[RMDB]
RNA sequence: GGGAACGACUCGAGUAGAGUCGAAAAUGGUCGUCGACUUGUGCAACUAUUGUACAAUUUUAAUCAGACUAAUAUUGCACAUGUCCCGGCCAAUAAAGAUUGGGAAUAUGUUCGCAUAUUCCCAAUCCGUUACAGCUUCGUUCGCGAAGCUGUAACGAAAAGAAACAACAACAACAAC
Reactivity to DMS in 0.01 (KOAc 150mM, MgCl2 10mM, bicine 150mM(pH8.5), 24C), signal-to-noise 2, nucleotides 027 to 126: u010g010g030u000c000g020u020c120g000a010c000u010u000g020u000g000c020a010a030c290u000a020u000u010g000u030a090c170a050a040u020u000u030u050a100a090u010c170a200g000a060c030u000a020a010u000a040u000u000g000c000a000c000a000u000g000u000c010c070c000g010g000c000c040a030a030u020a050a140a080g000a010u000u000g000g010g010a030a010u000a000u020g010u000u010c210g020c000a000u000a000u000u000c000c000c000a000a000u000c000
Reactivity to 2A3 in 0.01 (KOAc 150mM, MgCl2 10mM, bicine 150mM(pH8.5), 24C), signal-to-noise 2, nucleotides 027 to 126: u030g010g000u000c010g010u020c050g010a000c020u010u000g020u000g000c000a020a030c070u030a000u050u000g000u060a120c060a160a090u050u120u170u300a110a150u140c070a030g060a080c000u010a000a010u010a000u020u020g020c010a010c000a010u020g000u000c000c000c010g020g020c010c030a000a000u030a010a040a010g020a000u000u010g000g000g000a000a000u000a010u010g020u010u030c120g020c070a000u000a000u000u000c000c000c000a000a000u000c010
Source information:
Chemical mapping of a 177-nucleotide RNA with DMS and 2A3. The DMS profile rests on 1,261 reads. The data come from the RNA Mapping Database (RMDB), library RFMREP. Conditions: 150 mM KOAc, 10 mM MgCl2 and 150 mM bicine (pH 8.5), 24 C.